Source information:
This 170-nucleotide RNA was probed chemically with 2A3 and DMS. The 2A3 profile rests on 8,667 reads.

RNA sequence: GGGAACGACUCGAGUAGAGUCGAAAAGUCGGGGAAGGGGAGACCCCGAGGAGGAUCUCCAGCUAAAGAGUGGAGGAAAUCUCGGAAAGCUUCCCCCAAGAAGAACUGGGACGCUCUCAAGAAGGAGGAUAAUUAUACUUCGGUAUAAUUAAAAGAAACAACAACAACAAC
Reactivity to 2A3 in 0.01 (KOAc 150mM, MgCl2 10mM, bicine 150mM(pH8.5), 24C), signal-to-noise 4, nucleotides 027 to 129: g030u030c000g000g000g020g050a070a060g000g010g030g010a020g020a050c000c000c000c000g010a020g040g050a010g050g020a010u020c020u000c010c000a140g030c050u100a100a090a010g180a060g050u100g010g020a020g000g000a020a090a060u030c050u020c030g000g010a070a070a030g020c000u030u020c000c010c000c000c000a010a010g010a050a000g010a020a040c090u060g000g010g030a020c040g000c010u000c000u000c020a010a020g030a000a030g040g010a010g010g020a030u020
Reactivity to DMS in 0.01 (KOAc 150mM, MgCl2 10mM, bicine 150mM(pH8.5), 24C), signal-to-noise 4, nucleotides 027 to 129: g000u010c060g070g000g000g050a090a090g050g040g000g000a050g050a020c090c000c020c010g010a000g030g020a050g000g030a130u000c030u000c050c090a000g020c000u040a080a090a110g000a300g040u060g020g050a020g000g030a030a030a090u000c030u000c000g030g000a040a070a100g020c040u000u050c020c010c020c040c020a070a050g020a040a040g010a050a060c130u000g020g000g020a070c120g010c060u030c060u040c050a080a060g000a050a020g000g030a000g000g000a140u010
The DMS profile rests on 18,113 reads. As a SHAPE reagent, 2A3 marks flexible, mostly unpaired nucleotides at the ribose 2'-OH. Reactivities are given for positions 27 through 129. For 2A3 the reverse transcriptase was SuperScript II with manganese.